An RNA of 177 nucleotides, treated with DMS and 2A3 and read out base by base.

RNA sequence: GGGAACGACUCGAGUAGAGUCGAAAAUCGCUAAGCUUCGGCUUAGCGAAAAGUCGCCGCUUGAGGGCGUGUACGGCUGCGCACACACACGACCCUCAAGCCAAAGCAUCGUGUUCGCACGAUGCAACCAUCUGCAAUAGUUCGCUAUUGCAGAUGGAAAAGAAACAACAACAACAAC
Reactivity to DMS in 0.01 (KOAc 150mM, MgCl2 10mM, bicine 150mM(pH8.5), 24C), signal-to-noise 5, nucleotides 027 to 126: u000c010g020c000u000a000a000g000c000u000u020c200g030g010c000u000u000a000g010c010g000a000a010a060a140g000u000c080g010c050c060g020c000u000u000g000a030g010g000g010c000g030u000g010u000a090c150g000g010c060u000g010c100g020c050a090c040a110c100a020c020a020c010g000a180c000c000c010u000c010a010a000g010c020c160a030a080a090g000c000a000u000c000g020u000g010u000u010c200g020c000a000c000g010a010u010g000c000a040a060
Reactivity to 2A3 in 0.01 (KOAc 150mM, MgCl2 10mM, bicine 150mM(pH8.5), 24C), signal-to-noise 5, nucleotides 027 to 126: u020c010g000c000u000a000a000g000c010u030u160c280g110g000c000u020u000a000g000c000g000a000a000a000a000g010u010c040g040c170c040g000c010u000u000g000a010g000g000g030c030g000u000g000u020a030c090g050g040c070u190g110c130g040c050a060c000a000c000a000c010a010c100g290a300c020c000c000u000c000a000a000g000c000c010a050a060a010g000c000a000u000c000g000u000g030u070u080c210g040c080a000c000g000a000u000g010c000a000a010

About this RNA:
The reactions ran in a buffer of 150 mM KOAc, 10 mM MgCl2 and 150 mM bicine (pH 8.5), at 24 C. DMS adducts were read by reverse transcription with MarathonRT.